This 177-nucleotide RNA was probed chemically with 2A3 and DMS. Source: RMDB library TTRDEL, as collected in RNAgym. DMS adducts were read by reverse transcription with MarathonRT. For 2A3, 7,879 sequencing reads were counted.
RNA sequence: GGGAACGACUCGAGUAGAGUCGAAAAGAUAUGGAUCUAAGCAAGGCGCAGAGUGUCGGAAACGACACGAUCGCUGAUGACCUUAGAGUCCUAAGUCAAAACAACAGGAAGUUCGCUUCCUGUUGAACUUUGUCUCAAUGUUCGCAUUGAGACAAAGAAAAGAAACAACAACAACAAC
Reactivity to 2A3 in 0.01 (KOAc 150mM, MgCl2 10mM, bicine 150mM(pH8.5), 24C), signal-to-noise 3, nucleotides 027 to 126: g020a010u040a020u150g000g000a000u000c000u000a000a010g010c020a110a250g060g000c030g060c130a060g070a020g140u000g000u010c000g020g000a070a030a020c010g010a010c010a010c000g010a030u010c020g000c020u010g010a040u070g030a020c010c000u020u010a010g010a030g300u140c000c000u040a090a020g040u020c030a020a000a150a250c000a000a020c000a000g000g020a020a000g010u060u160c180g070c120u010u000c000c000u020g000u000u000g000a010a010
Reactivity to DMS in 0.01 (KOAc 150mM, MgCl2 10mM, bicine 150mM(pH8.5), 24C), signal-to-noise 6, nucleotides 027 to 126: g010a060u000a300u000g010g010a290u000c000u000a000a010g000c020a070a090g000g020c000g020c210a060g000a300g010u000g000u000c000g000g000a050a060a150c000g000a020c000a000c000g000a130u000c020g000c010u000g000a050u000g000a090c300c000u000u000a000g010a030g000u000c000c000u010a050a080g010u010c030a110a070a080a210c020a020a020c000a000g020g010a020a010g010u000u020c260g010c000u000u000c000c000u000g010u000u000g000a050a120